Chemical mapping of a 207-nucleotide RNA with DMS and 2A3. The RNA was probed in 150 mM KOAc, 10 mM MgCl2 and 150 mM bicine (pH 8.5) at 24 C. For DMS, 1,637 sequencing reads were counted.
RNA sequence: GGGAACGACUCGAGUAGAGUCGAAAAGGGGUCCUUCGUCGAGGAUCAGCACAGGCGAUGAAAUACAGCUGAAGCCUCCACGGCUGUAUGGAGCCUGGAUUGAUCCUAAGACAGCGAAGGACGGAGGCACCCAAAGUUUACGCUUCGGCGUAAACAAUCGAUAAGGAAUCUUCGGAUUCCUUAUCGAAAAAGAAACAACAACAACAAC
Reactivity to DMS in 0.01 (KOAc 150mM, MgCl2 10mM, bicine 150mM(pH8.5), 24C), signal-to-noise 1, nucleotides 027 to 156: g000g000g020g020u020c000c000u000u000c070g050u010c050g000a020g000g010a020u000c020a020g040c300a150c030a040g000g000c020g000a090u030g000a140a250a000u000a010c000a080g000c030u000g000a030a030g010c000c070u000c020c010a300c040g000g000c000u010g000u000a000u000g030g030a050g020c010c010u020g000g000a060u020u000g030a070u000c000c030u000a200a130g000a060c300a020g010c030g000a090a090g020g020a000c030g040g040a020g060g090c010a020c020c000c060a070a110a170g030u000u000u000a000c000g010c000u000u000c300g060g030c000g040u000a000a010a020c000a080a120
Reactivity to 2A3 in 0.01 (KOAc 150mM, MgCl2 10mM, bicine 150mM(pH8.5), 24C), signal-to-noise 1, nucleotides 027 to 156: g120g000g030g020u000c010c010u000u000c010g030u010c000g020a010g000g000a000u010c000a000g050c060a030c010a020g020g000c020g200a300u000g000a020a010a000u010a000c000a010g000c000u020g040a200a010g070c000c000u000c000c010a020c000g000g000c000u000g020u010a010u000g000g010a000g000c000c000u000g000g000a000u010u030g000a000u000c000c000u010a030a010g000a000c000a000g000c000g000a000a000g010g000a010c000g010g000a010g000g010c010a040c010c000c000a010a120a020g000u000u010u000a000c000g000c000u040u080c280g130g000c000g000u020a010a000a000c000a000a080